[RMDB]
RNA sequence: GGGAACGACUCGAGUAGAGUCGAAAAUCUCGCAAGUUCGCUUGCGAGAGUAAUAAAUAAAAUGGGUUCAACUCCCCCCCUUUUCCGACGGUAUCGGAAACCGUACAAACGGCUUCGGCCGUUUGAAUCAGUCUCAUGAAUUCGUUCAUGAGACUGAAAAAGAAACAACAACAACAAC
Reactivity to DMS in 0.01 (KOAc 150mM, MgCl2 10mM, bicine 150mM(pH8.5), 24C), signal-to-noise 2, nucleotides 027 to 126: u000c000u000c000g000c000a010a000g010u000u020c300g030c000u010u000g000c000g000a000g000a010g000u020a060a100u010a090a110a070u000a040a030a080a080u000g000g000g000u010u010c150a070a300c090u000c000c000c010c000c010c000c000u000u000u010u010c010c030g000a020c050g010g000u000a300u000c060g020g000a070a030a040c110c040g000u000a190c060a030a020a000c000g020g000c020u000u000c250g030g020c000c000g000u000u000u000g000a080a090
Overview
This 177-nucleotide RNA was probed chemically with DMS. The RNA was probed in 150 mM KOAc, 10 mM MgCl2 and 150 mM bicine (pH 8.5) at 24 C. The DMS profile rests on 1,370 reads. For DMS the reverse transcriptase was MarathonRT.